The data come from the RNA Mapping Database (RMDB), library TTRDES. Chemical mapping of a 177-nucleotide RNA with DMS and 2A3. 2A3 adducts were read by reverse transcription with SuperScript II with manganese. The RNA was probed in 150 mM KOAc, 10 mM MgCl2 and 150 mM bicine (pH 8.5) at 24 C.

RNA sequence: GGGAACGACUCGAGUAGAGUCGAAAAGAUAUGGAAUGUGGUACAGCGAAGAACUAGGUCGGAAACGACCUAGGGAGCUGAUACCCAUUCCUAAGUCAAAAGUGAAGACCGUUCGCGGUCUUCACAAGGUUAUAAUUGUGUUCGCACAAUUAUAACCAAAAGAAACAACAACAACAAC
Reactivity to DMS in 0.01 (KOAc 150mM, MgCl2 10mM, bicine 150mM(pH8.5), 24C), signal-to-noise 4, nucleotides 027 to 126: g010a050u010a300u010g000g010a010a000u000g010u010g060g010u000a020c020a020g010c010g000a130a180g010a180a220c020u010a000g010g000u010c000g000g000a130a110a220c000g020a010c000c000u000a000g000g000g010a060g010c010u000g000a160u010a000c000c010c000a020u000u000c000c000u000a020a070g000u000c050a090a090a140a160g010u010g000a010a010g000a020c000c000g030u010u020c260g020c020g010g000u000c000u000u000c000a000c000a050a060
Reactivity to 2A3 in 0.01 (KOAc 150mM, MgCl2 10mM, bicine 150mM(pH8.5), 24C), signal-to-noise 4, nucleotides 027 to 126: g020a030u060a040u160g000g040a020a010u040g190u300g030g000u020a010c010a010g020c020g270a300a020g030a070a010c000u000a000g000g000u010c010g050g010a060a110a090c000g000a000c020c000u000a000g000g000g000a010g000c010u010g060a110u010a000c000c010c000a010u010u000c000c000u000a070a000g050u020c040a060a000a040a140g000u000g000a000a000g010a000c010c010g020u020u070c270g030c030g160g000u000c000u010u000c000a000c000a010a010